RNA sequence: GGGAACGACUCGAGUAGAGUCGAAAAUUGCUUUGAAUGAAUCCGAUAGGGUCAUGACGAUCGAGACUGCGGAUACCAAGACCGAUUCCGAGGGUCGUACACUUCUAACAGCCUCCGGGGUCUCGUUAGAGAGCAUGCUGGAAGAUCGAAUCGCUACUCUGUGAAAAUGGUUCGCCAUUUUCACAGAAAAAGAAACAACAACAACAAC
Reactivity to 2A3 in 0.01 (KOAc 150mM, MgCl2 10mM, bicine 150mM(pH8.5), 24C), signal-to-noise 3, nucleotides 027 to 156: u100u070g010c030u130u060u070g080a070a060u060g010a040a050u040c040c040g100a170u140a140g050g000g010u080c030a040u050g040a080c050g020a070u080c010g010a000g000a020c020u070g080c080g030g000a030u040a090c010c040a050a040g020a020c020c030g070a100u160u110c050c040g030a110g050g000g040u010c010g000u030a010c040a030c100u130u060c020u080a120a090c020a050g020c000c040u030c020c020g100g000g000g000u000c010u010c020g000u010u020a080g010a000g020a030g040c020a020u080g000c030u060g030g020a010a010g000a080u050c020g060a070a040u040c020g010c060u020a050c010
Reactivity to DMS in 0.01 (KOAc 150mM, MgCl2 10mM, bicine 150mM(pH8.5), 24C), signal-to-noise 2, nucleotides 027 to 156: u010u000g000c020u000u000u020g020a120a060u000g000a110a070u010c000c000g030a200u000a060g020g000g000u000c020a080u000g020a160c110g010a010u010c040g010a060g030a080c030u010g040c020g030g000a110u000a120c040c010a030a200g010a030c010c000g010a130u000u000c020c020g020a070g010g010g060u000c030g010u020a040c170a050c070u000u020c040u000a140a060c080a110g020c030c020u000c020c050g060g030g010g010u010c000u000c030g010u000u000a070g030a150g000a110g030c010a070u010g010c070u010g020g000a120a080g000a150u000c010g000a070a100u000c030g010c040u010a110c070
This 207-nucleotide RNA was probed chemically with 2A3 and DMS.
For 2A3 the reverse transcriptase was SuperScript II with manganese.
For 2A3, 1,886 sequencing reads were counted.
For DMS the reverse transcriptase was MarathonRT.
The RNA was probed in 150 mM KOAc, 10 mM MgCl2 and 150 mM bicine (pH 8.5) at 24 C.